[RMDB]
RNA sequence: GGGAACGACUCGAGUAGAGUCGAAAAUCUGUCCGUUCGCGGACAGAAAAAACCUUUGUGGCUGCGAGGCAACAGCCUUGGAAUCAGCCCAUUGGGCUGUGGCCAAGGACAUGCCUCCGCAGCCACUCUGGUAAAGGCCCCUCCUUCGGGAGGGGCCGCAAUAACACUGCUUCGGCAGUGUUAUUGCAAAAGAAACAACAACAACAAC
Reactivity to 2A3 in 0.01 (KOAc 150mM, MgCl2 10mM, bicine 150mM(pH8.5), 24C), signal-to-noise 1, nucleotides 027 to 156: u010c000u010g000u000c000c030g000u000u040c300g000c020g060g000a030c020a020g000a000a000a000a010a000a000c030c000u040u000u010g010u000g000g000c000u000g000c000g020a020g020g020c020a080a000c090a150g050c010c000u010u000g020g020a050a090u040c010a000g070c060c000c020a150u110u150g010g000g000c020u010g050u090g170g070c020c010a030a010g020g010a050c000a130u060g000c020c000u000c020c020g030c010a000g080c000c000a000c000u000c000u000g000g030u070a150a110a050g000g000c060c070c010c010u010c010c000u060u070c230g030g000g010a010g000g010g000g030c010c040